[RMDB]
RNA sequence: GGGAACGACUCGAGUAGAGUCGAAAACGCCGCAACACGUCGCGCGGCUGGAAAAGGCAGGCCAAUUCCCCAAGCGGGUACAGCUGGGCCCGAACAGAGUGGGAUGGGUUGAGGACGAAGUGCUGGAAAGCUUUAUAAUGUUCGCAUUAUAAAGCUUAAAAGAAACAACAACAACAAC
Reactivity to DMS in 0.01 (KOAc 150mM, MgCl2 10mM, bicine 150mM(pH8.5), 24C), signal-to-noise 9, nucleotides 027 to 126: c110g010c000c000g000c020a030a050c050a050c050g020u010c030g000c070g000c010g000g010c010u000g010g000a060a060a280a100g010g010c010a300g000g020c000c020a100a300u040u020c010c000c000c030a100a110g020c150g010g000g010u000a120c300a120g000c010u010g000g010g010c000c000c010g000a130a160c030a030g000a300g010u020g000g000g000a040u000g000g000g000u000u000g000a040g000g010a090c070g010a090a130g010u010g000c020u000g000g000a300
Reactivity to 2A3 in 0.01 (KOAc 150mM, MgCl2 10mM, bicine 150mM(pH8.5), 24C), signal-to-noise 6, nucleotides 027 to 126: c030g010c000c000g000c010a020a010c010a010c040g040u030c000g040c010g000c010g240g250c040u010g030g000a100a180a030a060g020g000c010a010g030g000c000c010a020a060u150u080c030c000c000c010a130a030g060c170g060g000g000u040a060c040a030g020c000u060g030g260g010c000c000c010g010a040a000c020a000g030a000g030u060g000g110g010a020u020g000g020g000u010u030g020a030g030g010a020c030g020a130a040g050u090g160c030u030g000g030a080
Chemical mapping of a 177-nucleotide RNA with DMS and 2A3. Conditions: 150 mM KOAc, 10 mM MgCl2 and 150 mM bicine (pH 8.5), 24 C. The data come from the RNA Mapping Database (RMDB), libraries RFM100 and RFMREP.